[RMDB]
RNA sequence: GGGAACGACUCGAGUAGAGUCGAAAAUUUUCUUGGUCCUCCUUCCAGGUCUCUUCUCUGGGAAAGGCGUCGUGGCGCGCCAGAACUUAGUUAUGCUGGCUGCGGCGCAAAUGGCUGCUGGACGCCUAUACCGAGUUGGAUUCGUCCAACUCGGUAUAAAAGAAACAACAACAACAAC
Reactivity to 2A3 in 0.01 (KOAc 150mM, MgCl2 10mM, bicine 150mM(pH8.5), 24C), signal-to-noise 3, nucleotides 027 to 126: u000u010u000u000c010u010u050g070g000u040c000c000u000c010c010u080u010c000c010a020g000g050u010c000u020c020u170u010c060u030c010u040g000g000g080a020a050a080g090g000c000g000u010c020g010u010g090g010c070g000c030g000c040c030a010g010a030a030c060u080u060a060g060u200u080a130u300g030c050u020g100g000c030u050g010c010g010g040c010g000c000a020a100a080u140g010g000c010u060g000c020u090g080g000a020c000g000c000c010u000
Reactivity to DMS in 0.01 (KOAc 150mM, MgCl2 10mM, bicine 150mM(pH8.5), 24C), signal-to-noise 1, nucleotides 027 to 126: u060u000u000u000c010u000u020g020g000u000c070c010u000c010c060u000u000c020c030a100g060g000u050c190u000c090u000u050c070u010c040u000g050g000g040a080a180a060g010g010c030g000u000c000g000u000g000g000c000g000c020g020c030c010a000g000a080a060c050u020u020a140g030u010u000a040u010g040c040u040g000g010c020u040g020c000g000g000c040g010c020a020a050a060u050g000g020c020u000g000c060u000g000g050a060c030g010c020c020u030